Structure probing data (DMS and 2A3) for a 170-nucleotide construct. The data come from the RNA Mapping Database (RMDB), library 15KLIB. The reactions ran in a buffer of 150 mM KOAc, 10 mM MgCl2 and 150 mM bicine (pH 8.5), at 24 C. 2A3 adducts were read by reverse transcription with SuperScript II with manganese. Values are in units of 0.01, from 0 to 300, in steps of 10.
RNA sequence: GGGAACGACUCGAGUAGAGUCGAAAACAACAGUUAUCUUGCCACUGCAUUGUUAACACUCCAACAAAUAGAGUUGAAGUUUAAUCCACCUGCUCUACAAAGGGCUGGUGAAGCUGCUAACUUUUGUCCGCUCAGGAGUUCGCUCCUGAGAAAAGAAACAACAACAACAAC
Reactivity to DMS in 0.01 (KOAc 150mM, MgCl2 10mM, bicine 150mM(pH8.5), 24C), signal-to-noise 8, nucleotides 027 to 129: c030a020a020c060a000g000u000u020a050u010c100u040u080g000c040c080a080c060u030g040c090a050u050u060g060u030u040a040a090c060a010c000u040c030c030a040a010c030a050a130a110u130a090g070a090g000u000u030g010a090a000g030u020u030u040a030a060u050c030c010a050c020c020u040g000c040u020c020u070a120c300a110a150a050g000g000g040c000u000g000g000u010g000a000a090g060c000u040g030c070u010a010a010c020u020u020u000u010g030u040c050c050g040
Reactivity to 2A3 in 0.01 (KOAc 150mM, MgCl2 10mM, bicine 150mM(pH8.5), 24C), signal-to-noise 9, nucleotides 027 to 129: c000a000a000c010a000g010u020u020a060u070c090u100u250g020c020c040a080c050u060g020c040a060u060u080g040u060u090a070a020c040a010c070u000c020c010a010a010c020a030a200a120u300a070g160a010g050u000u020g020a030a010g000u020u040u140a040a020u080c030c000a010c000c000u020g010c000u000c000u060a160c110a080a220a090g000g000g000c000u030g010g000u000g000a010a010g000c010u030g000c010u010a010a010c000u020u010u010u030g050u020c010c010g010